An RNA of 207 nucleotides, treated with 2A3 and read out base by base. For 2A3, 877 sequencing reads were counted. Conditions: 150 mM KOAc, 10 mM MgCl2 and 150 mM bicine (pH 8.5), 24 C.

[RMDB]
RNA sequence: GGGAACGACUCGAGUAGAGUCGAAAAGAUAUGGACUAGUGUUGACGCCUUCUUUCCCACAAUGACGUGGGAUCGGAAACGAUCCCAUAAGACAGUGGGAUUGAGGCGAAGGCUAGUCCUAAGUCAAAACGAAUAUGGACUUCGGUCCAUAUUCGAAGCCUUUUAUCGGGUUCGCCCGAUAAAAGGCAAAAGAAACAACAACAACAAC
Reactivity to 2A3 in 0.01 (KOAc 150mM, MgCl2 10mM, bicine 150mM(pH8.5), 24C), signal-to-noise 1, nucleotides 027 to 156: g020a020u120a050u160g000g000a000c000u010a020g000u060g090u240u180g140a090c020g020c040c000u160u280c010u020u120u050c010c050c010a010c000a010a260u230g010a020c040g020u000g000g000g000a000u000c020g010g040a070a000a000c010g000a000u020c000c000c050a000u010a020a000g040a010c000a020g020u000g010g030g000a000u000u020g010a000g000g000c000g020a010a000g030g030c000u000a000g000u000c000c000u000a030a000g070u030c040a000a000a110a020c020g000a000a020u000a000u020g000g060a000c060u010u180c300g080g010u000c000c000a000u000a000u020u000c000g000a040a000